[RMDB]
RNA sequence: GGGAACGACUCGAGUAGAGUCGAAAAGUUUACGCUCCAAGAUCGGUGGAUAGCAGCCCUAUCAAUAUCUAGGAGAACUGUGCUAUGUUUAGAAGAGUAGGUAGUCUCUAAACAGAACAAUUUACCUCAUACGUUAGGACGUUCGCGUCCUAACGAACCAUAAGUGAUCCUUCGGGAUCACUUAUGGAAAAGAAACAACAACAACAAC
Reactivity to 2A3 in 0.01 (KOAc 150mM, MgCl2 10mM, bicine 150mM(pH8.5), 24C), signal-to-noise 7, nucleotides 027 to 156: g020u060u080u120a060c060g010c020u000c010c010a040a020g010a040u050c110g120g200u100g110g030a040u040a020g040c070a030g050c040c000c000u000a020u030c020a050a070u030a020u140c020u050a070g010g020a020g020a040a050c100u130g010u030g080c020u060a020u080g010u010u000u010a060g010a280a010g000a030g010u060a030g040g030u020a040g020u000c000u000c000u010a000a000a000c010a010g060a060a030c100a040a020u040u040u070a030c010c000u080c060a090u070a150c020g000u000u000a000g000g000a000c010g000u030u020c200g010c010g110u010c000c000u000a000a000c000g000a010a010
Reactivity to DMS in 0.01 (KOAc 150mM, MgCl2 10mM, bicine 150mM(pH8.5), 24C), signal-to-noise 2, nucleotides 027 to 156: g020u000u010u000a140c050g010c030u020c030c010a070a120g040a010u000c110g050g100u010g020g000a080u000a100g050c050a200g070c180c130c000u010a050u000c030a120a160u010a130u000c060u010a160g000g000a300g010a070a100c060u000g010u000g000c010u000a140u000g000u000u000u000a060g050a130a130g000a160g000u000a100g050g020u000a190g010u000c010u000c010u000a060a010a080c030a000g030a100a090c060a030a110u000u010u010a130c020c000u000c100a060u000a210c030g020u000u010a020g000g020a070c010g030u010u000c290g000c040g040u010c000c000u000a010a000c000g030a060a070